RNA sequence: GGGAACGACUCGAGUAGAGUCGAAAACCGCCAGUCUCCCGGGACCAACGAGACCAUCACGGCGCUGAUGGGGGCGGUGACGUCUUUGCAGCAGGAACUGGCGCACAUGCGGGCUAGGACCAGCGCCAUGCUACCAAGACUUCGGUCUUGGUAGCAUAAAAGAAACAACAACAACAAC
Reactivity to 2A3 in 0.01 (KOAc 150mM, MgCl2 10mM, bicine 150mM(pH8.5), 24C), signal-to-noise 3, nucleotides 027 to 126: c000c000g000c020c010a010g010u030c020u020c130c000c030g040g000g050a040c030c020a040a030c050g040a000g110a080c010c000a000u000c000a010c070g070g040c030g000c110u040g000a040u010g020g010g000g040g020c030g030g020u010g040a040c050g010u000c010u030u130u190g070c040a100g010c040a040g050g040a040a000c020u030g020g030c010g000c000a060c010a050u190g020c060g000g030g040c010u120a060g050g050a080c000c010a020g000c000g000c000c010
Reactivity to DMS in 0.01 (KOAc 150mM, MgCl2 10mM, bicine 150mM(pH8.5), 24C), signal-to-noise 2, nucleotides 027 to 126: c070c000g010c020c020a110g020u000c040u010c000c030c070g010g010g000a040c070c090a110a090c000g000a110g030a020c000c010a030u000c010a020c040g030g010c040g010c110u000g000a000u000g000g000g000g000g020c050g000g000u000g000a200c160g000u000c000u010u020u010g030c170a100g010c100a060g020g040a050a090c040u000g030g000c030g000c040a030c140a040u000g000c060g000g040g020c070u010a020g010g020a130c020c030a020g000c000g010c000c040
The record gives the reactivity of an RNA of 177 nucleotides to 2A3 and DMS. Conditions: 150 mM KOAc, 10 mM MgCl2 and 150 mM bicine (pH 8.5), 24 C. It was measured as part of the RMDB library OK1LIB. For 2A3 the reverse transcriptase was SuperScript II with manganese.